[RMDB]
This 177-nucleotide RNA was probed chemically with 2A3 and DMS. DMS adducts were read by reverse transcription with MarathonRT. High 2A3 reactivity points to a flexible backbone, as in loops and unpaired stretches. The RNA was probed in 150 mM KOAc, 10 mM MgCl2 and 150 mM bicine (pH 8.5) at 24 C.
RNA sequence: GGGAACGACUCGAGUAGAGUCGAAAAUCACGGUCAGCAGCCGUCAGGGCGCCGCGCAGCCGCUGGCCGGACAUCUGGUGAUGCGCGGGGGCGACCUCGUGUACGCCGAGUGCGGCGGGCACAGUGGACCAGGAGGUUUAUUCGUAAACCUCCUGGUAAAAGAAACAACAACAACAAC
Reactivity to 2A3 in 0.01 (KOAc 150mM, MgCl2 10mM, bicine 150mM(pH8.5), 24C), signal-to-noise 2, nucleotides 027 to 126: u090c000a010c010g020g030u020c000a000g010c010a010g000c050c030g180u110c080a130g090g090g050c030g000c040c010g000c000g000c000a000g030c000c020g000c000u010g030g000c010c010g020g040a020c030a060u060c140u190g020g000u050g020a180u010g040c000g000c030g000g000g000g000g020c040g030a060c000c000u000c030g010u000g000u030a000c010g000c000c000g030a080g050u120g030c020g010g020c050g000g030g040c040a050c030a060g140u170g060g050
Reactivity to DMS in 0.01 (KOAc 150mM, MgCl2 10mM, bicine 150mM(pH8.5), 24C), signal-to-noise 3, nucleotides 027 to 126: u000c060a120c030g000g000u010c000a030g020c030a130g020c020c070g020u010c180a130g010g020g020c040g010c030c020g000c010g030c010a150g000c010c020g010c010u010g000g020c000c010g000g010a070c160a080u010c150u000g020g010u010g000a150u000g010c010g010c010g000g000g000g000g000c220g010a170c010c000u000c020g030u010g010u010a020c030g000c000c000g000a140g010u010g000c030g000g010c020g010g000g010c020a080c060a080g010u010g000g010
Annotation: Source: RMDB library OK2TRN, as collected in RNAgym.